[RMDB]
RNA sequence: GGGAACGACUCGAGUAGAGUCGAAAAGGAUGUCAUCACCGUUAUUUGUCGAGCAGAUACCAAACCACGAAAUGCAGCUUCUAAUGUUUCUACAUCCCGUUGAUCAGGAACAACGAUGAGUACUCCACCAUACCGUUUCGUUCGCGAAACGGUAUGGAAAAGAAACAACAACAACAAC
Reactivity to DMS in 0.01 (KOAc 150mM, MgCl2 10mM, bicine 150mM(pH8.5), 24C), signal-to-noise 2, nucleotides 027 to 126: g000g010a050u000g010u000c020a070u020c020a090c040c050g020u020u000a050u020u000u010g020u000c050g010a110g010c040a050g020a100u010a090c100c050a030a060a120c090c040a050c080g000a080a110a060u000g000c030a030g010c060u020u010c050u010a070a050u010g020u000u000u000c000u000a070c050a090u000c000c080c010g020u000u010g010a070u010c110a050g000g010a050a080c080a060a100c050g000a090u000g000a100g000u000a060c060u000c010c060a200
Reactivity to 2A3 in 0.01 (KOAc 150mM, MgCl2 10mM, bicine 150mM(pH8.5), 24C), signal-to-noise 1, nucleotides 027 to 126: g020g040a010u080g030u060c010a030u030c000a010c030c060g040u060u000a100u090u110u080g060u060c010g040a030g000c000a000g030a070u060a110c070c020a030a030a030c010c020a030c070g080a010a000a070u110g000c020a020g050c030u000u000c000u050a110a090u090g010u000u000u000c030u020a050c030a070u000c060c000c000g060u020u070g030a060u080c070a060g050g000a040a050c000a020a000c030g020a070u090g000a020g050u030a070c040u040c010c010a060